[RMDB]
RNA sequence: GGGAACGACUCGAGUAGAGUCGAAAACGCACUCGCAGCUUAAUAACCUGCGCUGAGCCCUUCUCCCCCAGCUUGCCUGUGUCCUAGGGAAUUGGAAGGUCAUCCUUCACACGAUCGUGUGGAAGUCAUUACUCGUGAGUGUUCGCACUCACGAGAAGAUUAUUAUCAACUUCGGUUGAUAAUAAUCAAAAGAAACAACAACAACAAC
Reactivity to DMS in 0.01 (KOAc 150mM, MgCl2 10mM, bicine 150mM(pH8.5), 24C), signal-to-noise 3, nucleotides 027 to 156: c070g020c050a090c030u010c010g000c030a020g000c030u010u000a110a130u020a180a110c220c010u010g000c010g050c110u000g010a120g000c020c020c030u010u000c070u000c030c010c000c020c050a080g010c030u000u000g000c040c040u000g020u010g020u010c040c030u000a120g010g060g010a100a130u000u010g000g000a100a080g020g040u000c060a130u000c040c010u000u010c010a000c000a010c010g010a170u000c150g000u000g020u000g010g020a040a060g010u010c030a120u000u000a240c010u000c000g020u000g000a050g050u010g000u000u010c280g010c020a020c010u010c010a000c010g000a000g000a010a070
Reactivity to 2A3 in 0.01 (KOAc 150mM, MgCl2 10mM, bicine 150mM(pH8.5), 24C), signal-to-noise 3, nucleotides 027 to 156: c070g000c000a030c050u040c010g020c010a000g000c010u030u040a040a010u030a050a050c000c000u000g010c010g010c140u050g020a020g010c020c000c000u070u050c100u100c000c000c000c000c000a000g010c010u060u110g040c010c000u030g010u010g040u110c000c030u030a020g000g020g060a040a070u090u080g040g030a040a020g010g000u050c030a060u080c020c010u000u030c000a000c000a000c010g180a290u170c120g000u010g010u020g050g020a000a030g040u030c040a060u100u170a060c000u010c000g000u000g000a000g000u000g000u030u040c030g000c030a000c000u000c000a000c000g000a000g000a000a000

Chemical mapping of a 207-nucleotide RNA with DMS and 2A3. The reactions ran in a buffer of 150 mM KOAc, 10 mM MgCl2 and 150 mM bicine (pH 8.5), at 24 C. Values cover nucleotides 27 to 156. The data come from the RNA Mapping Database (RMDB), library M2RFPK. For DMS, 6,139 sequencing reads were counted. DMS adducts were read by reverse transcription with MarathonRT.